Annotation
Conditions: 150 mM KOAc, 10 mM MgCl2 and 150 mM bicine (pH 8.5), 24 C. This 207-nucleotide RNA was probed chemically with DMS and 2A3. DMS (dimethyl sulfate) methylates the pairing face of unpaired adenines and cytosines. High 2A3 reactivity points to a flexible backbone, as in loops and unpaired stretches. DMS adducts were read by reverse transcription with MarathonRT.

RNA sequence: GGGAACGACUCGAGUAGAGUCGAAAAAGCAUCUUGAAGUAUAAGUGUAUAACCUCUAAAAAUGAUAAAGUAGCAAUUUUUGUGUUUGCUACUACUUCUAUCAUAAGUUUAUCAAUUUACUUGAUGGAAUACAGUAUCUUCAAGUAUUGGUUGAGAAUGACCUAUAGGAUUUCGAUCCUAUAGGUCAAAAAGAAACAACAACAACAAC
Reactivity to DMS in 0.01 (KOAc 150mM, MgCl2 10mM, bicine 150mM(pH8.5), 24C), signal-to-noise 1, nucleotides 027 to 156: a090g010c040a070u000c010u000u000g010a030a050g000u010a020u000a010a100g000u000g050u010a040u010a090a120c010c000u010c040u000a010a090a070a200a040u030g000a060u000a060a040a010g010u000a020g000c040a010a080u000u010u030u000u030g060u000g000u000u010u010g030c000u010a010c010u000a010c000u000u010c140u000a030u000c030a010u010a130a040g000u000u010u000a130u000c060a020a040u010u010u000a090c040u000u000g010a030u010g040g060a300a100u010a070c060a060g020u000a080u010c030u000u010c010a020a020g010u000a010u010u000g010g020u000u010g000a180g010a170a190
Reactivity to 2A3 in 0.01 (KOAc 150mM, MgCl2 10mM, bicine 150mM(pH8.5), 24C), signal-to-noise 2, nucleotides 027 to 156: a030g030c020a010u040c020u010u020g010a030a000g010u150a030u010a140a050g040u000g020u030a020u000a080a050c000c010u070c030u060a140a120a050a030a010u020g000a020u010a010a040a040g000u000a000g000c000a000a020u030u050u070u230u240g130u030g040u100u040u010g000c000u000a000c000u000a000c010u090u060c060u060a070u030c010a050u030a120a040g020u020u100u030a080u070c030a070a090u000u030u080a090c080u050u010g030a060u230g020g000a000a000u020a010c010a010g090u030a010u030c010u010u030c010a000a000g030u030a070u040u090g020g000u030u110g110a020g070a060a200